[RMDB]
Chemical mapping of a 177-nucleotide RNA with DMS and 2A3. It was measured as part of the RMDB library OK2TRN. Values cover nucleotides 27 to 126. The DMS profile rests on 1,787 reads. Conditions: 150 mM KOAc, 10 mM MgCl2 and 150 mM bicine (pH 8.5), 24 C.
RNA sequence: GGGAACGACUCGAGUAGAGUCGAAAAGCCUGCGACGCGGGCGCGAGGCGGGCGCGCUCGAUCGCGUCCAGAUACUCGGGCGUGACGUCGCCGGUGAUGUAGUCGCCGUCGAAGCACGACGCCUCGACGUGCUCCUGAUCUUCGGAUCAGGAGCACGAAAAGAAACAACAACAACAAC
Reactivity to DMS in 0.01 (KOAc 150mM, MgCl2 10mM, bicine 150mM(pH8.5), 24C), signal-to-noise 1, nucleotides 027 to 126: g020c040c000u010g010c000g030a010c050g020c060g000g020g000c000g020c000g020a020g010g000c060g020g010g000c000g000c000g020c060u000c200g000a110u010c000g020c000g000u000c000c000a070g000a120u000a110c060u000c040g010g000g000c010g020u010g010a090c030g010u000c020g000c030c010g020g000u000g000a060u020g010u020a090g020u000c040g000c020c010g000u000c000g000a080a040g000c060a120c120g000a070c080g010c010c030u000c020g000a200
Reactivity to 2A3 in 0.01 (KOAc 150mM, MgCl2 10mM, bicine 150mM(pH8.5), 24C), signal-to-noise 2, nucleotides 027 to 126: g010c000c000u020g010c040g090a010c040g060c020g060g040g000c070g060c000g040a010g020g000c040g030g040g020c010g000c000g000c020u100c140g010a100u120c000g030c000g010u000c000c000a000g040a140u200a160c010u040c030g000g080g020c160g210u030g010a140c020g020u020c000g000c010c000g000g000u080g000a060u070g100u170a060g130u070c030g010c070c010g000u020c040g010a100a030g030c060a010c110g180a030c030g030c010c000u000c020g030a060